This 177-nucleotide RNA was probed chemically with DMS and 2A3.
DMS adducts were read by reverse transcription with MarathonRT.
Conditions: 150 mM KOAc, 10 mM MgCl2 and 150 mM bicine (pH 8.5), 24 C.
Source: RMDB library OK2TST, as collected in RNAgym.
[RMDB]
RNA sequence: GGGAACGACUCGAGUAGAGUCGAAAAGCGUGGGCAGUGUGGUGCACGUGGCGGUGGGCGUCGAUACUCAUGCGUGCUGUUCCAGCGACGUGGGGUGCGAUCGCUGGUUACGCCGGCGGCUGGUCCGCCGCCCCGUAAGGUUCGCCUUACGGGGCGGAAAAGAAACAACAACAACAAC
Reactivity to DMS in 0.01 (KOAc 150mM, MgCl2 10mM, bicine 150mM(pH8.5), 24C), signal-to-noise 5, nucleotides 027 to 126: g010c070g030u000g000g000g000c040a060g010u010g020u000g000g020u000g010c040a060c060g020u000g010g010c060g020g010u000g010g000g000c040g010u000c040g010a100u010a050c070u000c070a100u010g010c040g020u000g010c060u010g020u010u010c060c020a040g000c010g010a020c010g010u000g030g020g000g020u010g000c020g010a100u010c020g020c000u000g010g000u000u010a040c070g010c030c040g010g010c020g010g000c030u000g000g010u010c020c050g010
Reactivity to 2A3 in 0.01 (KOAc 150mM, MgCl2 10mM, bicine 150mM(pH8.5), 24C), signal-to-noise 4, nucleotides 027 to 126: g030c020g010u090g000g050g010c040a060g050u060g050u100g140g070u060g030c030a020c080g020u040g040g030c050g010g030u100g040g020g000c010g030u040c010g020a030u050a110c040u060c060a110u130g030c020g050u060g020c030u070g060u120u030c050c010a010g000c010g030a020c010g020u060g020g100g020g050u130g020c000g060a180u040c020g000c010u010g020g010u030u020a030c010g010c000c000g020g030c010g030g010c030u060g000g060u030c020c010g000